Chemical mapping of a 207-nucleotide RNA with DMS and 2A3. DMS adducts were read by reverse transcription with MarathonRT.
[RMDB]
RNA sequence: GGGAACGACUCGAGUAGAGUCGAAAAAACGUUGCAUGAUCGUAAAACAUGCGCGGCUUACCGUGAGCCGCCUUUGAAAGAAAGGUUUACACGGACUCUGUUGCGUUACGCACGUACCUAACUUGUGAAAACGGCAUCUUGUUCGCAAGAUGCCGAAGAUAGUAACGAUCUUCGGAUCGUUACUAUCAAAAGAAACAACAACAACAAC
Reactivity to DMS in 0.01 (KOAc 150mM, MgCl2 10mM, bicine 150mM(pH8.5), 24C), signal-to-noise 2, nucleotides 027 to 156: a070a040c010g010u000u010g050c000a040u000g000a110u000c030g020u000a050a060a060a070c020a010u000g000c020g060c000g000g030c020u000u000a090c020c070g020u000g010a070g040c040c030g030c010c010u010u010u000g000a130a080a180g000a070a040a070g010g010u000u010u000a170c020a100c040g030g010a160c190u010c040u000g030u020u010g010c020g010u010u010a100c080g010c060a060c070g000u000a060c030c020u000a050a080c040u010u000g020u020g020a080a050a080a130c000g000g000c000a000u010c010u000u010g000u030u000c260g030c010a030a000g000a020u000g000c010c010g030a000a010
Reactivity to 2A3 in 0.01 (KOAc 150mM, MgCl2 10mM, bicine 150mM(pH8.5), 24C), signal-to-noise 7, nucleotides 027 to 156: a000a000c000g000u010u000g000c000a000u010g010a050u170c060g080u240a130a160a010a010c000a000u000g000c000g010c000g000g000c000u020u120a070c000c020g020u010g000a010g020c000c020g030c010c020u100u070u080g170a140a100a030g120a020a050a000g040g010u060u070u110a030c010a010c020g070g050a160c050u070c090u190g120u130u060g020c020g040u080u080a080c190g020c000a010c030g020u060a060c010c040u060a080a130c020u100u070g050u050g140a060a070a010a020c000g010g000c000a010u000c000u020u010g020u080u050c110g010c100a000a000g000a000u000g000c000c000g000a000a000
For 2A3 the reverse transcriptase was SuperScript II with manganese. The reactions ran in a buffer of 150 mM KOAc, 10 mM MgCl2 and 150 mM bicine (pH 8.5), at 24 C.